[RMDB]
RNA sequence: GGGAACGACUCGAGUAGAGUCGAAAACGUGUCUUCGGACACGAUAAGUACCUUUGUGCGUAAGCAUAAGGGAGUUACGAAGGUCCCAUUGGGACCUAGUAACUUUGAUCUUAUGAACUACUUACGCACUCUGGUUUGGGGCCGAUUUCGAUCGGAAUCAGCUUAAGUUAUUCGUAACUUAAGCUGAAAAAGAAACAACAACAACAAC
Reactivity to DMS in 0.01 (KOAc 150mM, MgCl2 10mM, bicine 150mM(pH8.5), 24C), signal-to-noise 4, nucleotides 027 to 156: c010g040u000g000u000c000u000u000c300g050g010a010c000a010c000g000a040u000a030a150g010u000a050c000c010u000u000u000g020u000g000c000g010u000a010a020g000c000a040u010a040a050g010g000g000a000g010u010u000a010c010g000a250a170g020g010u000c000c000c010a300u000u020g070g040g000a010c000c010u000a040g000u000a010a020c000u000u000u010g010a130u010c030u000u000a070u000g030a150a220c050u000a140c000u000u010a010c000g010c000a010c000u000c030u000g000g020u000u010u000g030g010g030g020c000c000g010a090u000u010u000c220g010a090u000c010g020g010a160a190
Reactivity to 2A3 in 0.01 (KOAc 150mM, MgCl2 10mM, bicine 150mM(pH8.5), 24C), signal-to-noise 9, nucleotides 027 to 156: c000g000u010g000u000c020u040u100c300g130g010a000c000a000c000g000a030u070a080a050g150u090a020c000c000u000u010u010g000u000g000c000g000u000a000a000g000c000a000u000a000a000g020g010g000a010g000u000u000a010c050g070a260a070g000g010u010c020c010c050a120u270u300g010g000g000a000c000c000u000a000g000u000a000a000c000u120u080u060g070a080u050c000u000u010a000u010g010a050a070c040u120a030c000u300u000a000c000g000c000a000c000u000c000u000g000g030u020u090u170g020g000g020g000c020c000g000a010u070u090u140c260g100a030u020c010g030g000a020a080